This 177-nucleotide RNA was probed chemically with 2A3 and DMS.
The RNA was probed in 150 mM KOAc, 10 mM MgCl2 and 150 mM bicine (pH 8.5) at 24 C.
Reactivities are given for positions 27 through 126.
The data come from the RNA Mapping Database (RMDB), library OK2TRN.
RNA sequence: GGGAACGACUCGAGUAGAGUCGAAAACUGUGGAACUAUACAUAUCCCUCACUGUGAGCCAUUAAAUUGGAAUUCUAGUGAGGGGUAUCCACUGUCUUCAUGGCGGGAUGGCAAGUAUAACAACAAGCGUAUAGUACAAGUUCGCUUGUACUAUACGAAAAGAAACAACAACAACAAC
Reactivity to 2A3 in 0.01 (KOAc 150mM, MgCl2 10mM, bicine 150mM(pH8.5), 24C), signal-to-noise 9, nucleotides 027 to 126: c020u020g000u040g040g030a080a070c070u060a110u060a260c060a050u020a010u020c010c000c000u000c000a000c000u000g010u010g020a000g000c000c000a040u080u150a100a190a300u140u020g000g000a010a020u030u000c000u000a000g000u000g000a000g010g000g000g000u000a000u010c000c000a010c020u030g040u010c020u100u070c060a100u170g060g000c050g010g030g030a070u060g040g000c030a020a060g060u080a080u040a180a070c080a020a010c030a060a010g110
Reactivity to DMS in 0.01 (KOAc 150mM, MgCl2 10mM, bicine 150mM(pH8.5), 24C), signal-to-noise 9, nucleotides 027 to 126: c030u000g010u000g000g010a130a130c170u000a080u000a080c190a190u000a010u000c000c000c000u000c000a010c000u000g000u000g000a030g000c000c000a010u000u000a050a100a100u000u000g010g010a020a050u000u000c000u000a000g010u000g000a010g000g000g010g010u000a000u000c010c020a020c010u010g000u000c030u000u010c070a080u000g010g010c070g010g010g010a060u000g010g010c080a050a070g010u000a040u010a040a060c100a040a100c300a060a080g010